[RMDB]
RNA sequence: GGGAACGACUCGAGUAGAGUCGAAAAACUGCAAUCUCUGCUGAUGGAGACAUAAUUGUCAGCUGCUGUGAUGAUGGCACCAUCUGGCGCUUUGACCUUGUUCCAAAGGAGAGCCUCAGCGCUGCAGGAUGUCUCUCCGGUUCGCCGGAGAGACAUCAAAAGAAACAACAACAACAAC
Reactivity to DMS in 0.01 (KOAc 150mM, MgCl2 10mM, bicine 150mM(pH8.5), 24C), signal-to-noise 1, nucleotides 027 to 126: a120c070u010g020c140a160a060u010c060u010c040u010g030c060u000g010a070u010g000g020a080g020a070c020a030u010a060a040u010u000g020u000c010a040g000c030u010g060c010u000g020u010g020a080u010g000a130u000g000g030c160a160c120c020a060u020c030u020g020g030c120g040c040u010u010u010g000a130c030c080u010u000g010u000u010c080c110a010a010a080g030g000a290g030a090g000c030c050u010c020a060g000c040g000c130u000g020c030a060g010
Reactivity to 2A3 in 0.01 (KOAc 150mM, MgCl2 10mM, bicine 150mM(pH8.5), 24C), signal-to-noise 1, nucleotides 027 to 126: a000c010u000g060c010a100a100u040c040u000c020u140g070c040u040g030a080u200g030g000a030g040a030c010a030u250a170a080u170u080g020u060c010a010g020c060u130g030c010u040g060u090g080a060u030g010a020u070g000g050c060a040c070c000a050u030c030u000g040g000c030g010c090u040u070u100g080a090c000c000u030u030g000u140u090c040c000a060a030a000g030g020a090g040a010g010c000c000u020c000a010g000c040g040c060u000g000c000a010g050

The data come from the RNA Mapping Database (RMDB), library OK2TST. Chemical mapping of a 177-nucleotide RNA with DMS and 2A3. In probing experiments dimethyl sulfate is read out at A N1 and C N3, which are open when not base-paired. DMS adducts were read by reverse transcription with MarathonRT. The RNA was probed in 150 mM KOAc, 10 mM MgCl2 and 150 mM bicine (pH 8.5) at 24 C. High 2A3 reactivity points to a flexible backbone, as in loops and unpaired stretches.